The data come from the RNA Mapping Database (RMDB), library OK3TST. The record gives the reactivity of an RNA of 207 nucleotides to DMS and 2A3. Reactivities are given for positions 27 through 156. Conditions: 150 mM KOAc, 10 mM MgCl2 and 150 mM bicine (pH 8.5), 24 C.

RNA sequence: GGGAACGACUCGAGUAGAGUCGAAAAGUGAGUCGUGUUACACGAUCGCGUCUUCCGUUACAACUUAGACAAGCGGGUAAAUGAUUAUUGCGAGAUGUGAAGGUACCCGAACCACAGGGUGUACAUUGUGUGUUAGUCUUGCUAUCGCAUAAUCUGGUAUGUGCUUCCAAUUCGUUGGAAGCACAUAAAAAGAAACAACAACAACAAC
Reactivity to DMS in 0.01 (KOAc 150mM, MgCl2 10mM, bicine 150mM(pH8.5), 24C), signal-to-noise 1, nucleotides 027 to 156: g010u000g010a130g070u000c010g040u000g000u000u060a100c030a030c020g010a080u000c020g050c020g050u000c050u000u000c020c050g050u000u000a050c070a070a050c040u000u010a120g030a090c090a060a080g010c030g000g020g040u000a070a080a150u000g010a100u000u000a080u010u010g050c040g000a110g020a120u000g020u020g000a090a090g030g020u000a140c010c000c000g010a070a180c030c040a090c060a160g050g000g010u010g000u000a060c130a050u030u000g010u010g000u000g010u020u000a140g010u020c010u010u000g000c040u000a160u000c050g010c030a040u000a020a110u000c020u010g010g000
Reactivity to 2A3 in 0.01 (KOAc 150mM, MgCl2 10mM, bicine 150mM(pH8.5), 24C), signal-to-noise 2, nucleotides 027 to 156: g020u020g070a080g020u010c040g030u020g170u210u150a110c070a000c030g000a040u030c040g000c010g020u010c000u050u030c010c000g030u080u100a110c060a140a090c080u070u150a030g050a180c050a160a060g010c040g000g010g130u100a000a080a120u160g010a020u000u060a020u050u230g030c000g020a040g000a030u250g030u020g120a080a080g030g000u060a060c000c000c000g020a020a040c060c010a040c060a060g010g010g010u040g050u110a130c070a130u010u150g070u040g050u000g010u160u100a080g000u040c000u030u010g030c010u020a000u100c010g000c000a000u010a030a020u010c000u030g000g120